[RMDB]
RNA sequence: GGGAACGACUCGAGUAGAGUCGAAAAAUGAGUCAACCCAGAGCAUUUGCAGUUUCAUUGCGUGGUCGACGCACUGUUGGUAAUGGUGUAUGCGAAAAGGUGUGUGGAUGUUUAUGACGGUUUGUUCGCAAGCUGAAAAGAAACAACAACAACAAC
Reactivity to 2A3 in 0.01 (KOAc 150mM, MgCl2 10mM, bicine 150mM(pH8.5), 24C), signal-to-noise 9, nucleotides 027 to 135: a000u070g010a000g040u020c010a010a020c000c000c000a010g020a010g000c040a060u020u020u130g010c010a010g040u010u030u050c040a050u030u080g020c020g020u030g030g060u080c030g050a020c010g000c010a010c020u030g050u100u070g050g030u090a030a030u050g030g000u010g010u020a040u090g050c050g050a030a020a010a020g030g000u040g010u000g010u020g060g020a050u020g020u020u040u010a040u030g020a000c000g000g020u000u000u030g040u010u010c020g000c010a000a000g010c010u050g090a090
Reactivity to DMS in 0.01 (KOAc 150mM, MgCl2 10mM, bicine 150mM(pH8.5), 24C), signal-to-noise 9, nucleotides 027 to 135: a060u020g000a050g010u000c030a080a010c000c000c030a000g000a110g010c070a070u010u000u010g010c070a060g010u000u000u010c030a070u010u000g010c070g020u010g000g010u010c060g000a050c070g000c030a040c050u010g010u010u010g010g010u020a050a050u010g000g010u010g010u000a050u000g010c040g000a040a050a080a110g000g010u000g010u000g010u000g000g000a060u000g000u000u000u000a030u010g000a180c050g000g000u000u000u010g000u000u010c090g010c020a030a050g000c020u000g000a060

The record gives the reactivity of an RNA of 155 nucleotides to 2A3 and DMS. In probing experiments dimethyl sulfate is read out at A N1 and C N3, which are open when not base-paired. Source: RMDB library P90LIB, as collected in RNAgym.